[RMDB]
RNA sequence: GGGAACGACUCGAGUAGAGUCGAAAAGAACGAGGUGACGUCUCCGGGCGGACAGGGCCCGGCCUUCGGGGCCGCCUGAGGGAGCCGAGAAGGGCAGACGAUGAAGGCGGGCGGAUAAGCCGGGCCCACUAAGUAUACUCUUCGGAGUAUACUUAGUAAAAGAAACAACAACAACAAC
Reactivity to DMS in 0.01 (KOAc 150mM, MgCl2 10mM, bicine 150mM(pH8.5), 24C), signal-to-noise 7, nucleotides 027 to 126: g010a090a100c070g000a100g010g000u010g000a110c060g010u010c010u010c090c100g020g010g010c040g000g000a070c160a110g020g000g010c010c000c000g010g010c000c010u000u000c010g000g020g010g020c010c010g000c000c000u000g020a140g010g000g010a300g010c010c000g000a140g040a150a130g010g000g010c010a050g000a190c070g010a110u020g010a130a030g010g010c000g010g000g000c010g000g000a020u010a100a190g000c000c000g010g010g000c010c000c000
Reactivity to 2A3 in 0.01 (KOAc 150mM, MgCl2 10mM, bicine 150mM(pH8.5), 24C), signal-to-noise 5, nucleotides 027 to 126: g050a050a010c060g020a040g040g050u080g070a020c020g020u010c010u010c030c040g020g020g010c020g030g040a040c030a120g010g010g000c000c000c010g000g000c000c000u010u010c010g040g000g140g080c000c000g000c000c000u020g010a060g020g030g040a020g000c000c010g080a120g130a170a110g070g000g000c040a050g090a220c040g080a120u110g040a010a000g010g000c010g010g000g000c010g010g010a030u030a070a000g000c000c000g000g000g000c000c000c000
Description
An RNA of 177 nucleotides, treated with DMS and 2A3 and read out base by base. The reactions ran in a buffer of 150 mM KOAc, 10 mM MgCl2 and 150 mM bicine (pH 8.5), at 24 C.